An RNA of 170 nucleotides, treated with DMS and 2A3 and read out base by base. For 2A3 the reverse transcriptase was SuperScript II with manganese.
RNA sequence: GGGAACGACUCGAGUAGAGUCGAAAAUCCUAAAAGACCGAGGGGGGGUGCUUGGAGCACGGGGGUCCCAGUGGAUCCGUGGGAUGCUCCUCCCGAUUCCGAUAUCCCUUCCCCCGAGAGGUCCCCCGCACUGCUGCCUUCGGGCAGCAGAAAAGAAACAACAACAACAAC
Reactivity to DMS in 0.01 (KOAc 150mM, MgCl2 10mM, bicine 150mM(pH8.5), 24C), signal-to-noise 2, nucleotides 027 to 129: u030c020c030u030a020a110a110a070g020a040c070c060g050a150g000g000g000g000g000g000g000u060g040c220u040u000g000g000a050g040c070a080c100g000g000g000g000g000u010c000c000c000a050g040u040g060g060a050u070c070c130g000u030g040g000g000a150u030g000c090u000c060c010u000c010c040c060g000a300u040u000c060c000g040a040u040a000u050c120c000c000u020u060c040c000c010c060c050g040a080g040a250g020g000u030c010c030c030c020c000g030c290a050
Reactivity to 2A3 in 0.01 (KOAc 150mM, MgCl2 10mM, bicine 150mM(pH8.5), 24C), signal-to-noise 2, nucleotides 027 to 129: u030c010c000u020a070a090a050a050g010a000c000c000g000a110g000g000g000g000g000g010g000u020g010c020u050u070g040g010a010g000c060a010c120g000g000g000g000g000u010c000c000c000a030g040u120g090g160a100u090c120c040g100u080g000g000g000a020u050g100c070u070c020c030u000c030c000c000g000a000u010u000c000c020g030a060u000a050u130c020c000c010u110u150c000c000c000c000c000g090a060g020a040g060g020u000c000c000c000c000c000g040c000a080